[RMDB]
RNA sequence: GGGAACGACUCGAGUAGAGUCGAAAAAGGUAGAAGUGUAUUAUCUGGUGUUGUUAUUGAUUUAGACAAAGAAGGUAAAACAAAGCACAUCGAACGUAUAUUGAUAAAUGAUGACCAUCCAUUUUCACCACAUAGUAAGGUUCGCCUUACUAUGUGGAAAAGAAACAACAACAACAAC
Reactivity to DMS in 0.01 (KOAc 150mM, MgCl2 10mM, bicine 150mM(pH8.5), 24C), signal-to-noise 6, nucleotides 027 to 126: a080g010g000u000a070g010a170a090g010u000g010u000a070u010u010a050u000c020u000g020g020u010g020u000u000g000u000u000a070u000u010g010a130u010u000u010a090g010a050c050a040a050a080g020a160a050g010g010u000a020a050a080a050c090a040a060a110g010c050a050c040a030u000c040g010a050a080c190g010u010a050u000a090u000u000g010a070u010a020a050a040u000g010a080u000g000a100c040c030a110u010c050c040a080u000u000u010u000c080a160
Reactivity to 2A3 in 0.01 (KOAc 150mM, MgCl2 10mM, bicine 150mM(pH8.5), 24C), signal-to-noise 5, nucleotides 027 to 126: a000g060g000u060a070g020a230a020g040u020g020u080a080u110u020a030u070c070u100g040g010u080g050u100u110g030u040u050a140u090u090g040a050u000u050u170a050g030a050c020a020a100a020g130a050a050g080g010u040a020a030a010a030c060a030a060a020g000c020a010c000a030u010c040g020a050a020c030g060u080a050u030a030u160u120g030a030u060a160a080a050u110g050a040u090g030a040c010c020a020u040c020c000a020u060u040u010u020c050a070

Record summary:
The data come from the RNA Mapping Database (RMDB), library OK2TRN. Chemical mapping of a 177-nucleotide RNA with DMS and 2A3. The reactions ran in a buffer of 150 mM KOAc, 10 mM MgCl2 and 150 mM bicine (pH 8.5), at 24 C. For DMS the reverse transcriptase was MarathonRT.